The record gives the reactivity of an RNA of 177 nucleotides to 2A3 and DMS. For DMS, 3,057 sequencing reads were counted. High DMS reactivity at an A or C suggests that its Watson-Crick edge is free. The RNA was probed in 150 mM KOAc, 10 mM MgCl2 and 150 mM bicine (pH 8.5) at 24 C. For 2A3, 2,128 sequencing reads were counted. For 2A3 the reverse transcriptase was SuperScript II with manganese.

RNA sequence: GGGAACGACUCGAGUAGAGUCGAAAAUCGGGGAAGGGUGAGAACCUUCGACUAAGGUUCGAUUCGAGCGAAAGCGAGAGAGCGUUGCCACAGGCAACGGCCCGAAGGUGAGGAGCGAAGCGACGAAGCAUAGACUAACCUUCGGGUUAGUCUAUGCAAAAGAAACAACAACAACAAC
Reactivity to 2A3 in 0.01 (KOAc 150mM, MgCl2 10mM, bicine 150mM(pH8.5), 24C), signal-to-noise 2, nucleotides 027 to 126: u090c000g000g000g000g040a070a030g020g040g010u070g030a100g000a020a020c000c010u050u040c070g040a020c040u060a040a020g010g010u020u010c020g020a100u000u060c020g000a020g030c030g050a080a010a000g010c040g000a020g000a000g010a010g090c030g000u000u000g000c030c010a290c110a170g000g000c000a000a010c000g020g030c000c000c000g020a010a020g020g040u100g020a020g010g020a030g040c050g030a090a010g060c000g060a090c040g040a120a010
Reactivity to DMS in 0.01 (KOAc 150mM, MgCl2 10mM, bicine 150mM(pH8.5), 24C), signal-to-noise 4, nucleotides 027 to 126: u000c100g000g010g010g000a090a060g010g010g010u000g010a220g000a060a030c000c000u000u000c170g010a110c190u020a070a040g010g010u000u000c020g010a110u010u010c030g010a190g010c040g000a120a120a130g020c030g000a180g000a110g010a070g020c020g000u010u000g010c000c020a110c290a110g010g030c000a010a010c020g000g020c010c000c030g000a050a060g010g010u020g000a080g000g000a090g010c080g010a090a100g000c090g000a070c100g010a090a140